Conditions: 150 mM KOAc, 10 mM MgCl2 and 150 mM bicine (pH 8.5), 24 C. This 170-nucleotide RNA was probed chemically with DMS and 2A3. For DMS, 34,140 sequencing reads were counted. The data come from the RNA Mapping Database (RMDB), library 15KLIB. For DMS the reverse transcriptase was MarathonRT.
RNA sequence: GGGAACGACUCGAGUAGAGUCGAAAACCCGGGCGCUCCCCUCGGAGGUCCACUGGGUGGGUUCACAUCCCCAACCCGCGGGCCGGCUGUUCUUCUUUCUCUUUCCUCGUCUUCCUCGGUCAACCUCGUAGCAAGGAGUUCGCUCCUUGCAAAAGAAACAACAACAACAAC
Reactivity to DMS in 0.01 (KOAc 150mM, MgCl2 10mM, bicine 150mM(pH8.5), 24C), signal-to-noise 7, nucleotides 027 to 129: c010c000c010g000g000g000c090g070c060u030c010c010c020c010u030c090g020g010a060g050g050u030c010c010a000c000u050g020g010g050u010g010g030g030u000u020c260a110c150a180u000c140c000c020c030a100a070c000c030c010g030c080g010g030g060c000c000g000g070c100u000g020u030u020c050u020u000c000u030u000u020c000u010c000u000u000u000c040c020u040c020g030u030c040u050u040c030c020u020c060g010g040u030c050a110a190c070c020u030c000g050u040a080
Reactivity to 2A3 in 0.01 (KOAc 150mM, MgCl2 10mM, bicine 150mM(pH8.5), 24C), signal-to-noise 9, nucleotides 027 to 129: c000c000c000g000g030g000c050g010c030u010c010c010c010c000u010c010g070g010a060g010g030u020c010c010a020c090u120g010g010g010u030g010g010g010u110u160c120a070c020a180u160c020c000c000c010a090a220c010c010c000g020c020g000g020g000c000c000g030g010c030u030g030u060u020c010u040u000c000u020u070u000c030u000c000u040u040u020c010c010u030c000g040u020c040u100u030c020c010u000c020g010g010u020c020a030a080c010c010u040c040g080u060a020